[RMDB]
RNA sequence: GGGAACGACUCGAGUAGAGUCGAAAAAUGUAUGUGAAGAGCAUGCAAGAAUAGGUUUCUUCUCCAUCUGACUCCUUCCAACCAAUUUCCAGAAGUAACAUUACGUUUUUUGCCCAGUUAGGAAAAAUACAUUUUCAGAAGACAUCUGAGAAUUGCACUAUCGAAGAUGUUUCGACAUCUUCGAUAGAAAAGAAACAACAACAACAAC
Reactivity to 2A3 in 0.01 (KOAc 150mM, MgCl2 10mM, bicine 150mM(pH8.5), 24C), signal-to-noise 4, nucleotides 027 to 156: a000u030g020u040a010u000g060u040g030a090a200g010a000g070c010a010u040g010c020a020a020g100a110a090u200a090g040g040u040u050u050c000u080u010c070u000c000c020a110u020c050u070g060a080c010u010c010c000u050u010c010c030a030a050c010c040a090a110u030u060u050c030c020a030g020a120a010g130u080a100a020c020a120u050u210a050c090g040u010u000u000u060u170u130g030c020c020c020a030g020u110u130a040g030g020a020a080a040a060a060u150a040c030a050u020u020u000u020c010a000g000a110a030g120a080c050a080u010c010u010g010a000g030a060a030u030u060g020c020a050
Reactivity to DMS in 0.01 (KOAc 150mM, MgCl2 10mM, bicine 150mM(pH8.5), 24C), signal-to-noise 2, nucleotides 027 to 156: a170u000g020u000a010u010g010u000g000a130a170g000a300g030c030a030u000g000c030a100a090g000a140a100u000a100g000g010u000u000u010c010u010u000c020u010c050c040a120u050c050u000g000a110c020u000c030c010u000u000c040c030a110a220c050c050a060a180u000u000u000c020c040a080g000a070a080g010u000a040a120c110a080u000u000a080c030g020u000u010u000u000u000u000g010c030c010c030a140g030u000u000a040g050g010a030a050a030a110a130u000a020c030a050u000u000u000u000c010a080g010a040a250g040a130c130a110u000c010u000g010a070g000a000a040u000u010g040c030a090